RNA sequence: GGGAACGACUCGAGUAGAGUCGAAAAGAUAUGGAGGAGGACAUCACUGAUGACCUCGGAAACGAGCAAGGUGAUGUCUCCUCCUAAGUCAAACAGCUGCAAAGAAGUUCGCUUCUUUGCAGCUGAACGUAAACGAUACGUUCGCGUAUCGUUUACGAAAAGAAACAACAACAACAAC
Reactivity to DMS in 0.01 (KOAc 150mM, MgCl2 10mM, bicine 150mM(pH8.5), 24C), signal-to-noise 4, nucleotides 027 to 126: g010a020u000a300u000g000g010a030g010g020a020g000g020a020c000a010u000c000a010c000u000g020a130u000g010a050c300c000u000c000g000g000a100a100a140c010g000a020g010c010a070a110g000g000u000g010a000u000g000u000c000u000c000c000u000c000c000u000a010a050g000u000c020a120a100a250c010a010g000c000u000g000c000a000a000a000g000a010a020g000u000u000c180g010c000u000u000c000u000u000u000g000c000a000g000c000u000g010a010a060
Reactivity to 2A3 in 0.01 (KOAc 150mM, MgCl2 10mM, bicine 150mM(pH8.5), 24C), signal-to-noise 2, nucleotides 027 to 126: g010a000u070a030u150g020g000a010g010g020a060g100g120a020c000a000u020c000a000c000u060g070a290u150g040a230c000c030u010c010g000g010a050a080a000c020g000a000g030c000a080a200g000g000u000g010a000u000g000u020c000u000c000c000u000c010c000u000a000a000g000u000c020a000a000a100c010a000g000c000u000g000c000a010a010a000g000a020a000g010u100u180c300g070c170u000u000c000u000u000u000g000c000a000g010c000u000g000a000a010

The data come from the RNA Mapping Database (RMDB), library TTRDEL.
The record gives the reactivity of an RNA of 177 nucleotides to DMS and 2A3.
For 2A3, 4,712 sequencing reads were counted.
Values cover nucleotides 27 to 126.
DMS (dimethyl sulfate) methylates the pairing face of unpaired adenines and cytosines.
DMS adducts were read by reverse transcription with MarathonRT.